[RMDB]
RNA sequence: GGGAACGACUCGAGUAGAGUCGAAAACCUACCUUCGGGUAGGGUAUAGGGGUCCUUUCUGGAGACGGUCUUUUGACGAGCUGAAGCCUCCACGGCUCGAUAAGAUCGUCUAUGAAGGAAAGGACGGAGGCACCCUUGCUUCAUAGUUCGCUAUGAACAUUAUAUCAUCCUUCGGGAUGAUAUAAUGAAAAGAAACAACAACAACAAC
Reactivity to DMS in 0.01 (KOAc 150mM, MgCl2 10mM, bicine 150mM(pH8.5), 24C), signal-to-noise 3, nucleotides 027 to 156: c010c000u000a000c010c010u010u010c300g040g020g040u000a010g020g040g000u000a040u010a100g000g030g010g010u000c000c000u010u000u000c020u000g040g010a050g020a040c010g040g030u000c010u000u000u000u000g020a190c090g010a040g000c010u000g000a050a150g020c020c010u000c010c030a300c060g010g000c010u000c010g020a170u000a040a020g010a060u000c010g030u000c000u010a020u000g020a210a260g000g000a040a030a030g010g010a020c000g010g010a020g070g050c010a150c040c010c070u000u000g010c020u000u010c030a030u010a060g020u000u000c260g040c000u000a030u010g010a060a230
Reactivity to 2A3 in 0.01 (KOAc 150mM, MgCl2 10mM, bicine 150mM(pH8.5), 24C), signal-to-noise 5, nucleotides 027 to 156: c000c010u000a010c010c000u050u130c300g100g000g010u020a020g040g010g030u100a170u200a170g180g030g040g020u010c000c010u010u000u000c010u010g010g010a010g000a000c010g000g010u020c020u020u190u180u200g180a130c080g000a000g000c000u010g010a050a000g010c000c000u000c000c000a010c010g010g000c000u000c000g030a050u050a140a020g000a000u010c020g000u000c000u000a050u000g000a030a020g010g010a010a000a000g000g000a000c000g000g000a000g000g000c000a020c010c000c000u050u160g050c010u020u010c000a010u000a020g030u050u120c210g020c130u010a010u020g000a010a010

This 207-nucleotide RNA was probed chemically with DMS and 2A3. The RNA was probed in 150 mM KOAc, 10 mM MgCl2 and 150 mM bicine (pH 8.5) at 24 C. The 2A3 profile rests on 6,008 reads. For DMS, 6,961 sequencing reads were counted. For DMS the reverse transcriptase was MarathonRT. DMS (dimethyl sulfate) methylates the pairing face of unpaired adenines and cytosines.